The record gives the reactivity of an RNA of 177 nucleotides to DMS and 2A3. For 2A3 the reverse transcriptase was SuperScript II with manganese. For 2A3, 11,646 sequencing reads were counted. DMS adducts were read by reverse transcription with MarathonRT. The data come from the RNA Mapping Database (RMDB), library OK1LIB.

RNA sequence: GGGAACGACUCGAGUAGAGUCGAAAAGGUCAUCAAAAAAAUAGCUGAGUGCCGCUCCGUUGACCAAGUCAUAGACUGCGUCUUUUUUGACUAUCGUGCUGCCCUCAGGGAGUUUCUCCUCAACCUCCCCAUUAAGCAAGUUCGCUUGCUUAAUGGGAAAAGAAACAACAACAACAAC
Reactivity to DMS in 0.01 (KOAc 150mM, MgCl2 10mM, bicine 150mM(pH8.5), 24C), signal-to-noise 3, nucleotides 027 to 126: g020g010u010c060a040u010c080a000a000a040a030a080a050a020u050a010g020c040u020g020a050g020u010g030c050c030g010c070u020c060c070g010u000u000g030a040c060c040a110a030g030u010c020a080u010a030g000a020c020u020g020c140g020u000c010u010u020u020u010u010u010g020a010c010u000a140u020c060g000u000g000c000u000g000c010c030c030u020c060a080g020g000g000a040g010u020u000u020c020u000c040c020u010c200a100a070c130c070u010c100
Reactivity to 2A3 in 0.01 (KOAc 150mM, MgCl2 10mM, bicine 150mM(pH8.5), 24C), signal-to-noise 9, nucleotides 027 to 126: g030g010u020c020a110u060c110a090a040a040a030a010a020a110u150a050g040c040u040g020a010g050u050g030c020c020g000c020u030c040c040g030u030u060g030a040c020c040a050a010g020u020c010a060u050a090g040a040c060u140g050c130g040u030c010u030u120u030u020u030u070g030a030c020u030a050u130c050g040u060g010c010u030g000c020c010c000u030c030a010g000g020g000a050g010u010u030u020c030u010c010c010u050c030a030a070c010c010u060c020